Structure probing data (DMS and 2A3) for a 177-nucleotide construct.
For DMS, 1,947 sequencing reads were counted.

[RMDB]
RNA sequence: GGGAACGACUCGAGUAGAGUCGAAAAGCCGAGCAGCCUGGCAACGGCGGUGGCGCCCGGAGCCCGAGGUGGGUGCGCGCUCACGGCUGGCCUGGCUCGGAGCCGGGCACUGCGGGGACCCGUGGUGAGCGUAGAAGGUAUUCGUACCUUCUACGCUAAAAGAAACAACAACAACAAC
Reactivity to DMS in 0.01 (KOAc 150mM, MgCl2 10mM, bicine 150mM(pH8.5), 24C), signal-to-noise 1, nucleotides 027 to 126: g040c020c000g000a240g050c070a100g010c060c020u010g020g010c060a090a140c100g000g020c030g020g030u000g010g010c030g000c070c070c030g010g010a080g000c040c020c040g000a070g010g010u010g010g020g030u010g000c100g020c100g000c050u000c120a070c120g010g000c030u010g000g000c000c020u000g000g010c000u000c030g000g010a140g010c030c010g000g000g030c010a010c020u000g010c020g000g000g000g020a140c150c020c010g000u020g020g020u010g000
Reactivity to 2A3 in 0.01 (KOAc 150mM, MgCl2 10mM, bicine 150mM(pH8.5), 24C), signal-to-noise 1, nucleotides 027 to 126: g030c020c000g020a020g030c040a030g050c000c050u030g000g020c020a090a110c050g000g030c040g080g000u060g040g050c040g020c000c030c060g090g080a040g040c030c030c050g090a130g000g300u240g010g010g000u150g080c090g000c000g010c000u140c040a110c040g040g060c060u070g040g020c000c000u040g110g000c000u020c010g020g000a010g050c020c000g070g010g010c000a030c050u060g000c020g010g030g110g000a170c000c040c020g010u040g090g010u090g020
Description
The data come from the RNA Mapping Database (RMDB), library OK2TST. For 2A3 the reverse transcriptase was SuperScript II with manganese. The reactions ran in a buffer of 150 mM KOAc, 10 mM MgCl2 and 150 mM bicine (pH 8.5), at 24 C.